RNA sequence: GGGAACGACUCGAGUAGAGUCGAAAACAAACAACAUGCCAAGCACUAGGGAAGAAGAGAAAGUGACGGUACCUGCAGAAGAAGCGCCGGCUAACAACGUAACAGCAGACGCUGCAAGGCAUGAAAACAUAAUCACGGUGUUCGCACCGUGAUUAUGAAAAGAAACAACAACAACAAC
Reactivity to 2A3 in 0.01 (KOAc 150mM, MgCl2 10mM, bicine 150mM(pH8.5), 24C), signal-to-noise 7, nucleotides 027 to 126: c020a000a090a010c030a010a000c010a020u020g000c010c000a020a040g020c000a030c050u090a050g060g060g030a120a080g080a090a030g100a040g090a090a160a020g080u100g080a060c030g040g010u040a070c000c010u060g020c050a050g020a210a010g070a040a010g040c010g000c010c020g040g000c020u080a050a030c060a050a010c080g090u110a030a040c020a040g020c010a010g030a030c030g010c020u010g000c010a020a070g000g000c020a010u030g010a020a010a010a000
Reactivity to DMS in 0.01 (KOAc 150mM, MgCl2 10mM, bicine 150mM(pH8.5), 24C), signal-to-noise 5, nucleotides 027 to 126: c120a040a100a080c170a080a160c020a000u000g010c010c000a030a300g000c050a150c110u020a060g000g000g030a200a100g000a080a080g000a090g010a050a090a060g020u010g000a160c050g010g000u030a100c030c030u000g020c060a100g010a110a090g010a150a040g010c010g020c040c000g000g000c030u010a030a060c190a080a060c140g010u020a040a040c230a020g020c030a040g010a100c030g020c070u000g000c040a030a260g020g000c020a020u000g000a090a010a090a090